[RMDB]
RNA sequence: GGGAACGACUCGAGUAGAGUCGAAAAGAGGCAGAGCGUCUGCGCUGGCAGGAGGAGCGCAAAAAGGGGGGCCAGACGGCCCACAAGACUGCCAAUGCGGCAAUGGAGGAAGUCCUGGAUGAUGAGGUCUUCUCCAAAGUUUCGACUUUGGAGAAGAAAAAGAAACAACAACAACAAC
Reactivity to 2A3 in 0.01 (KOAc 150mM, MgCl2 10mM, bicine 150mM(pH8.5), 24C), signal-to-noise 1, nucleotides 027 to 126: g040a000g030g060c060a000g010a030g080c070g050u050c080u060g010c080g000c030u050g010g070c040a000g000g010a060g010g050a070g000c050g000c000a030a040a020a050a020g180g030g010g030g000g030c000c010a050g050a080c150g010g000c000c000c000a010c010a040a020g010a020c020u060g040c030c030a010a030u140g000c010g000g020c000a050a130u110g070g000a020g040g050a070a000g040u010c010c000u050g040g000a040u070g010a010u060g030a020g070g040
Reactivity to DMS in 0.01 (KOAc 150mM, MgCl2 10mM, bicine 150mM(pH8.5), 24C), signal-to-noise 3, nucleotides 027 to 126: g000a110g020g020c040a030g020a140g020c060g010u000c040u010g030c040g010c030u000g000g030c060a040g010g010a080g000g010a070g010c030g000c070a020a040a060a090a090g010g000g020g020g010g020c010c020a120g010a130c220g020g010c010c000c020a020c060a050a070g010a120c070u010g020c000c010a090a080u010g000c060g010g030c040a060a150u000g010g000a070g010g000a060a060g010u000c030c020u000g000g000a040u010g000a070u010g000a080g010g010